The data come from the RNA Mapping Database (RMDB), libraries RFM100 and RFMREP. This 177-nucleotide RNA was probed chemically with DMS and 2A3. The reactions ran in a buffer of 150 mM KOAc, 10 mM MgCl2 and 150 mM bicine (pH 8.5), at 24 C.
[RMDB]
RNA sequence: GGGAACGACUCGAGUAGAGUCGAAAACUGGAACGCGUCUGUCGCUCGCAAUAGCCUUCAUCGCUUGAUGCUUUUGACCACGGAUGUACUGGCACUGGUAGGAAAGCGAUGAUCAGGAAGGUCGGUGAGUUACAUAUUGCUUCGGCAAUAUGUAACUAAAAGAAACAACAACAACAAC
Reactivity to DMS in 0.01 (KOAc 150mM, MgCl2 10mM, bicine 150mM(pH8.5), 24C), signal-to-noise 8, nucleotides 027 to 126: c040u010g010g000a070a050c070g010c060g010u010c050u010g000u010c050g010c030u000c040g010c090a080a080u040a120g010c010c030u010u000c000a010u000c010g010c000u000u000g000a290u010g010c010u000u000u010u000g000a150c010c010a030c150g010g010a150u020g010u020a130c180u000g000g000c020a040c030u010g000g000u000a020g000g010a130a020a020g010c000g000a010u000g000a020u020c140a050g000g010a070a050g000g010u000c030g010g020u000g000
Reactivity to 2A3 in 0.01 (KOAc 150mM, MgCl2 10mM, bicine 150mM(pH8.5), 24C), signal-to-noise 9, nucleotides 027 to 126: c030u040g030g060a070a040c040g010c020g050u040c050u090g140u090c020g010c040u020c020g020c030a060a150u060a140g030c000c000u010u020c010a020u000c010g000c010u020u030g010a020u040g030c000u050u030u030u070g230a300c000c010a070c090g100g040a120u240g060u250a110c040u020g010g000c000a000c020u020g060g010u020a040g010g230a060a000a000g000c010g020a010u020g010a010u060c000a000g060g010a040a020g040g020u060c030g010g040u070g050